Source: RMDB library OK2TST, as collected in RNAgym. This 177-nucleotide RNA was probed chemically with DMS and 2A3. 2A3 adducts were read by reverse transcription with SuperScript II with manganese. The 2A3 profile rests on 880 reads.
[RMDB]
RNA sequence: GGGAACGACUCGAGUAGAGUCGAAAAACGAAUUUCGCUUUGUGAAUCGGUCAACUGCUUGCUGAUGUCGGCAUAGUUACGCUCUAGAUCGGCAAUUUGUUGGUUACGCAGUUCAAGUGAUUCCGCAGCCGAUCAUGGUGUUCGCACCAUGAUCGGCAAAAGAAACAACAACAACAAC
Reactivity to DMS in 0.01 (KOAc 150mM, MgCl2 10mM, bicine 150mM(pH8.5), 24C), signal-to-noise 1, nucleotides 027 to 126: a030c060g010a090a060u020u000u000c060g040c080u000u020u010g010u010g000a040a020u000c000g020g010u010c020a000a010c000u000g000c070u000u000g000c000u010g000a020u000g020u000c300g000g010c290a070u000a160g010u000u020a080c270g000c040u020c070u000a080g000a040u000c030g000g010c090a050a020u000u000u010g020u000u000g000g010u000u010a080c150g040c120a050g030u000u000c080a090a030g000u050g000a080u000u010c050c010g000c180a080
Reactivity to 2A3 in 0.01 (KOAc 150mM, MgCl2 10mM, bicine 150mM(pH8.5), 24C), signal-to-noise 1, nucleotides 027 to 126: a000c050g040a030a030u030u140u000c030g030c010u130u050u170g070u140g040a040a070u100c030g020g030u040c080a020a050c000u050g040c030u000u020g000c000u000g000a050u060g070u140c060g040g000c000a040u060a100g180u130u180a070c090g050c010u020c000u040a130g010a160u020c000g000g000c020a010a060u090u090u120g000u020u050g000g020u050u010a000c060g000c000a040g000u050u080c040a060a010g000u030g060a040u040u000c060c000g080c020a030